The data come from the RNA Mapping Database (RMDB), library RSTRND. An RNA of 207 nucleotides, treated with DMS and 2A3 and read out base by base. The reactions ran in a buffer of 150 mM KOAc, 10 mM MgCl2 and 150 mM bicine (pH 8.5), at 24 C. High DMS reactivity at an A or C suggests that its Watson-Crick edge is free.
[RMDB]
RNA sequence: GGGAACGACUCGAGUAGAGUCGAAAAUGGCUCGGGGUUAACUGGUUCAACUUAAUCCUUAAAUUAUGAACUUAUCGUUUACUUGUUUGUCUUAUGAUCUAAAGUAAGCGAGACAUUAAAACAUAAGACUAAACUGUAGAAGCUGUUUUACCAAUCCGCUUAAUGUCUAGUUCGCUAGACAUUAAGCAAAAGAAACAACAACAACAAC
Reactivity to DMS in 0.01 (KOAc 150mM, MgCl2 10mM, bicine 150mM(pH8.5), 24C), signal-to-noise 2, nucleotides 027 to 156: u000g010g030c000u020c030g030g030g050g030u000u000a040a060c090u030g000g010u010u000c080a090a130c080u020u000a040a030u020c010c000u010u000a070a070a100u000u000a140u000g000a050a100c060u000u010a090u010c000g020u000u000u020a060c040u000u010g010u000u020u000g000u020c020u000u010a080u000g020a070u010c120u000a080a030a090g010u000a040a050g000c010g000a090g000a130c050a130u010u000a050a030a090a170c030a050u000a020a050g010a100c030u020a000a050a060c100u010g020u000a050g000a100a300g010c020u000g040u000u010u000u000a060c070c030a110a160u000c080c080
Reactivity to 2A3 in 0.01 (KOAc 150mM, MgCl2 10mM, bicine 150mM(pH8.5), 24C), signal-to-noise 8, nucleotides 027 to 156: u030g010g000c010u000c050g060g000g000g020u030u030a030a010c040u100g090g020u080u050c030a030a030c030u040u080a030a050u080c030c000u080u090a060a100a090u240u130a130u180g020a030a020c010u110u110a100u090c020g020u020u010u010a010c010u050u110g030u080u120u070g010u010c010u020u090a060u120g040a110u040c050u200a050a020a030g020u020a040a010g060c030g010a010g030a010c020a030u130u190a050a100a020a010c010a020u030a010a030g020a000c020u060a050a060a030c040u080g070u160a050g040a170a010g010c010u010g020u000u010u020u020a030c020c010a030a060u040c060c070